Conditions: 150 mM KOAc, 10 mM MgCl2 and 150 mM bicine (pH 8.5), 24 C. This 177-nucleotide RNA was probed chemically with DMS and 2A3. 2A3 adducts were read by reverse transcription with SuperScript II with manganese. DMS adducts were read by reverse transcription with MarathonRT. Values cover nucleotides 27 to 126. The 2A3 profile rests on 432 reads. It was measured as part of the RMDB libraries RFM100 and RFMREP.

RNA sequence: GGGAACGACUCGAGUAGAGUCGAAAACAAGCAUUAAUACUAAAUGUGUUUCAUCGUCUACUUAUUGCUAAACAAAUUGAUUGUUCAUCAAAUUUGCAAUUCGUUAGUUGGGUUAAAAUCGUUGUAAUUUCAUUGCACAAUUCGUUGUGCAAUGAAAAAAAGAAACAACAACAACAAC
Reactivity to DMS in 0.01 (KOAc 150mM, MgCl2 10mM, bicine 150mM(pH8.5), 24C), signal-to-noise 2, nucleotides 027 to 126: c060a130a200g010c020a020u000u000a060a060u020a090c160u040a080a060a010u000g030u000g000u010u000u010c070a110u010c080g000u010c030u010a040c020u000u000a020u000u000g020c070u030a080a030a070c110a020a050a080u010u000g000a030u000u010g020u020u010c100a050u000c020a050a040a160u000u000u010g020c010a030a010u020u000c040g000u000u000a060g000u000u000g020g010g010u000u000a040a040a080a090u020c100g020u010u000g030u000a070a060
Reactivity to 2A3 in 0.01 (KOAc 150mM, MgCl2 10mM, bicine 150mM(pH8.5), 24C), signal-to-noise 1, nucleotides 027 to 126: c040a020a030g100c010a010u030u090a030a040u180a300c070u230a160a040a070u040g070u000g100u050u050u000c060a010u140c040g080u000c010u030a040c000u000u020a050u050u040g020c040u110a000a160a000c030a010a130a180u000u040g060a080u110u100g070u050u070c060a000u000c000a000a040a060u030u040u000g000c000a000a000u000u000c000g010u040u000a000g000u000u180g050g000g000u060u050a130a080a000a000u120c040g000u000u070g030u010a000a070